[RMDB]
RNA sequence: GGGAACGACUCGAGUAGAGUCGAAAAUGAGAUAGCUAAAUCACCUCGGUAUGAUUAGGGUGAGACCUAGGAACCGUAGGGGUAUUCUCAAAGGAAGCUUUUGCAGUGACGCCCAUGUCAGUGGGAUAAGAACCAACCCACUUCGGUGGGUUGGUAACAUAGGACUUAGCUUCGGCUAAGUCCUAUGAAAAGAAACAACAACAACAAC
Reactivity to DMS in 0.01 (KOAc 150mM, MgCl2 10mM, bicine 150mM(pH8.5), 24C), signal-to-noise 2, nucleotides 027 to 156: u000g010a070g030a090u000a100g040c050u020a040a110a110u000c020a070c000c000u010c000g010g020u000a070u000g000a270u000u000a060g020g030g020u020g010a210g000a170c000c020u000a060g020g020a150a040c010c010g020u000a030g010g010g060g010u000a060u000u000c010u000c030a040a110a210g000g000a110a100g000c050u000u000u010u020g000c020a060g000u000g000a120c100g000c010c000c010a080u010g010u000c200a190g000u000g000g010g000a120u000a030a100g000a070a070c000c000a020a040c000c000c000a010c020u000u000c300g060g040u020g000g010g010u000u000g000g040u000a000a030
Reactivity to 2A3 in 0.01 (KOAc 150mM, MgCl2 10mM, bicine 150mM(pH8.5), 24C), signal-to-noise 3, nucleotides 027 to 156: u060g000a020g030a030u090a070g050c090u110a100a080a080u090c030a060c000c010u050c020g000g030u240a160u220g040a080u040u080a010g000g010g020u040g100a060g050a080c000c000u010a010g000g040a020a020c000c020g030u110a030g000g010g010g020u020a080u080u060c050u020c000a050a060a000g110g010a060a050g040c000u100u100u140u160g050c090a030g020u020g050a040c060g020c000c010c010a020u080g150u130c030a040g040u040g010g020g020a050u070a150a030g080a030a000c000c000a000a010c000c000c000a000c000u010u040c160g070g000u000g000g000g000u000u000g000g000u010a000a000